[RMDB]
RNA sequence: GGGAACGACUCGAGUAGAGUCGAAAAGAUAUGGACGAGGAAGAGCGAUAAGUCCCUGUCGGAAACGACAGAAGGACUUUUGACGCUCGCUCGUCCUAAGUCAAACUGGUGACUUCGGUCACCAGAAGACCUGCCUAAACUUCGGUUUAGGCAGGUCAAAAGAAACAACAACAACAAC
Reactivity to DMS in 0.01 (KOAc 150mM, MgCl2 10mM, bicine 150mM(pH8.5), 24C), signal-to-noise 1, nucleotides 027 to 126: g000a050u000a230u010g010g000a040c010g010a010g020g030a080a120g040a000g000c020g030a110u000a010a010g010u010c000c010c000u000g000u010c000g020g000a080a040a150c000g000a000c000a000g000a180a110g030g000a010c000u000u000u010u010g010a250c040g030c020u000c000g010c000u000c000g000u000c000c000u000a000a080g000u000c020a070a120a300c020u000g010g010u000g000a010c000u000u000c180g060g000u000c010a000c000c000a000g000a120a070
Reactivity to 2A3 in 0.01 (KOAc 150mM, MgCl2 10mM, bicine 150mM(pH8.5), 24C), signal-to-noise 1, nucleotides 027 to 126: g000a000u010a030u080g040g000a000c010g020a020g120g120a300a300g020a170g010c030g070a190u070a300a000g000u000c000c000c000u040g030u010c010g020g000a010a070a000c000g010a000c030a010g050a070a050g000g000a000c000u000u030u160u290g240a110c030g000c010u000c020g000c000u000c000g000u000c000c000u010a000a000g020u000c030a020a070a120c020u020g000g000u000g000a010c000u110u160c300g110g040u010c000a000c000c000a030g000a010a000